An RNA of 177 nucleotides, treated with DMS and read out base by base. Values are in units of 0.01, from 0 to 300, in steps of 10. The RNA was probed in 150 mM KOAc, 10 mM MgCl2 and 150 mM bicine (pH 8.5) at 24 C. It was measured as part of the RMDB library OK2TRN.
RNA sequence: GGGAACGACUCGAGUAGAGUCGAAAAGGAUUACGUUGCGGCAUAUCGGGUCAGCGCCGAUGCCGAGUUGCCCGAUACGUUGCCCGCGAUCCGGUCGCGUCCGGCGCAGGAGACCUGGAUCGCGCUGAGCCGGAGAAGGUUUCGACCUUCUCCGGCUAAAAGAAACAACAACAACAAC
Reactivity to DMS in 0.01 (KOAc 150mM, MgCl2 10mM, bicine 150mM(pH8.5), 24C), signal-to-noise 2, nucleotides 027 to 126: g000g010a120u000u010a090c150g020u000u000g000c020g010g020c020a070u000a090u000c000g040g020g000u010c080a100g010c080g040c020c060g030a190u010g030c170c060g010a130g010u000u000g000c010c020c010g000a020u000a020c090g030u000u000g010c000c050c000g000c000g000a020u000c010c010g020g020u000c010g010c160g000u000c070c010g000g000c060g020c030a110g020g020a300g020a030c020c000u010g090g000a030u000c020g010c000g030c130u000g000